[RMDB]
RNA sequence: GGGAACGACUCGAGUAGAGUCGAAAAUUUUCAGGAUCUCAGCCUUUCCAGCCUUGACAGUCUUAUGCUUUUAAUCAUACCUACCCUUCUAAAAGCAAUUGGCCUUUAGUUAGGCCCCUUUGGAAUGAGUCGAAAUACUUUUCGAAGUAUUUCGACUAAAAGAAACAACAACAACAAC
Reactivity to DMS in 0.01 (KOAc 150mM, MgCl2 10mM, bicine 150mM(pH8.5), 24C), signal-to-noise 2, nucleotides 027 to 126: u000u000u000u000c050a110g000g010a100u020c010u000c040a100g010c030c020u000u010u010c020c040a130g000c050c010u000u000g010a100c080a050g010u000c060u000u000a070u000g000c020u020u000u000u000a070a090u010c090a100u000a060c030c030u000a170c040c030c020u000u010c040u010a020a050a040a050g010c120a050a190u030u000g030g010c010c010u010u000u010a130g000u010u000a030g030g000c030c000c090c040u010u010u010g010g010a060a060u010g020
Reactivity to 2A3 in 0.01 (KOAc 150mM, MgCl2 10mM, bicine 150mM(pH8.5), 24C), signal-to-noise 1, nucleotides 027 to 126: u060u020u040u030c030a040g010g090a000u000c030u000c000a010g000c000c000u000u040u080c030c000a020g000c060c000u040u040g020a030c010a030g030u030c010u060u050a060u050g030c040u150u100u040u120a060a040u090c050a000u050a190c000c000u080a030c000c030c000u020u050c020u140a140a130a000a000g070c020a040a180u010u080g030g000c000c040u020u000u080a100g040u130u020a000g020g020c070c000c000c000u030u030u060g060g010a120a110u160g020